[RMDB]
RNA sequence: GGGAACGACUCGAGUAGAGUCGAAAAAUGAGAUCCCAUCUUGCACGCUGUGCUAAUUUGAGAUUCUCAUGCCUCCUACUUGGAGAGAUCUGGACUAGAAGUCAGGGCAUCUGACUCUGCCAGCCACAAAACGUACAAGGCUUCGGCCUUGUACGAACGCCUUGUUGAUGUUCGCAUCAACAAGGCGAAAAGAAACAACAACAACAAC
Reactivity to 2A3 in 0.01 (KOAc 150mM, MgCl2 10mM, bicine 150mM(pH8.5), 24C), signal-to-noise 1, nucleotides 027 to 156: a040u070g000a020g000a010u000c000c000c000a010u000c010u000u050g010c000a010c130g300c300u300g020u000g060c110u250a030a060u020u000u010g050a050g000a000u170u070c000u000c050a010u000g040c000c000u010c010c000u090a110c110u150u200g020g020a060g010a030g030a170u030c030u050g000g000a030c060u110a140g000a140a020g050u010c000a020g060g030g240c060a070u070c050u000g000a000c000u000c000u000g030c000c000a000g000c000c010a120c060a000a140a010a110c000g000u000a000c000a000a000g000g000c000u000u050c060g050g000c000c000u000u010g000u000a000c000g000a000a030
Overview:
An RNA of 207 nucleotides, treated with 2A3 and read out base by base. It was measured as part of the RMDB library M2RFPK. The reactions ran in a buffer of 150 mM KOAc, 10 mM MgCl2 and 150 mM bicine (pH 8.5), at 24 C.